Source: RMDB library OK1LIB, as collected in RNAgym. This 177-nucleotide RNA was probed chemically with 2A3 and DMS. 2A3 adducts were read by reverse transcription with SuperScript II with manganese. The reactions ran in a buffer of 150 mM KOAc, 10 mM MgCl2 and 150 mM bicine (pH 8.5), at 24 C. Values cover nucleotides 27 to 126. For DMS, 21,199 sequencing reads were counted.
RNA sequence: GGGAACGACUCGAGUAGAGUCGAAAAGACGCCUGUGUGGCGAAGCGAGCAUGAGAAAGAGCCGCACAGUCCAUCUGAUAUAAAGCGGCCAGAUGGAUUGCUCGCUAAAAGAUCCAUAUCACUGAGAACUAAUUAAUGGUUUCGACCAUUAAUUAGUAAAAGAAACAACAACAACAAC
Reactivity to 2A3 in 0.01 (KOAc 150mM, MgCl2 10mM, bicine 150mM(pH8.5), 24C), signal-to-noise 9, nucleotides 027 to 126: g060a010c030g070c020c010u160g080u090g090u150g110g010c020g020a010a000g000c000g000a000g000c000a010u040g010a010g100a060a110a010g080a050g000c000c000g000c010a030c010a020g040u030c060c010a140u140c030u030g040a010u030a030u070a270a160a020g030c020g030g010c010c000a060g030a110u060g030g000a010u000u020g000c000u000c000g000c000u000a000a010a000a010g050a030u020c030c020a030u070a040u200c080a080c100u120g070a050g040a150
Reactivity to DMS in 0.01 (KOAc 150mM, MgCl2 10mM, bicine 150mM(pH8.5), 24C), signal-to-noise 9, nucleotides 027 to 126: g010a150c090g010c020c010u010g020u030g030u030g000g000c010g010a150a050g010c000g000a010g000c000a020u020g010a300g000a050a110a170g000a180g020c000c000g010c000a180c030a040g010u030c140c150a100u020c010u000g000a110u030a120u040a050a130a140g010c020g010g000c010c010a070g000a160u000g000g000a110u000u000g010c000u010c000g010c020u000a010a030a050a070g010a100u040c030c020a080u040a060u020c100a080c100u020g010a120g000a130